[RMDB]
RNA sequence: GGGAACGACUCGAGUAGAGUCGAAAACUUACUUGGAUAUCUGUAGUAAUUCUAGAGUCAAUACAUGCUAAAAAGCCACUAGUAAUAGUGGUUGCAUUUAUGACUUUGUAAUCCAAUUCAUUGGUGACUAUAUGGAAGUGUUCGCACUUCCAUAUAGAAAAGAAACAACAACAACAAC
Reactivity to 2A3 in 0.01 (KOAc 150mM, MgCl2 10mM, bicine 150mM(pH8.5), 24C), signal-to-noise 4, nucleotides 027 to 126: c020u030u070a000c000u030u050g060g020a060u090a080u300c080u160g120u140a050g020u030a100a130u120u020c040u070a040g010a000g040u010c010a040a060u010a030c020a010u010g000c010u190a300a110a060a050a010g010c000c000a000c000u010a000g030u100a050a190u000a040g000u000g010g020u000u010g010c000a000u020u010u030a040u020g010a000c000u010u030u070g120u070a050a040u010c000c000a020a070u120u100c100a100u070u130g080g010u050g080a030
Reactivity to DMS in 0.01 (KOAc 150mM, MgCl2 10mM, bicine 150mM(pH8.5), 24C), signal-to-noise 6, nucleotides 027 to 126: c110u000u000a040c060u000u000g000g010a180u010a090u010c080u010g010u000a040g020u010a060a090u000u010c030u000a060g010a030g010u000c010a050a080u000a040c110a020u000g010c000u010a040a110a110a130a130g010c010c000a000c000u000a000g000u010a110a130u000a010g010u000g000g010u000u000g010c000a000u000u000u000a030u000g000a010c000u000u000u000g020u000a070a080u000c010c000a020a040u000u010c220a090u000u000g000g000u000g000a190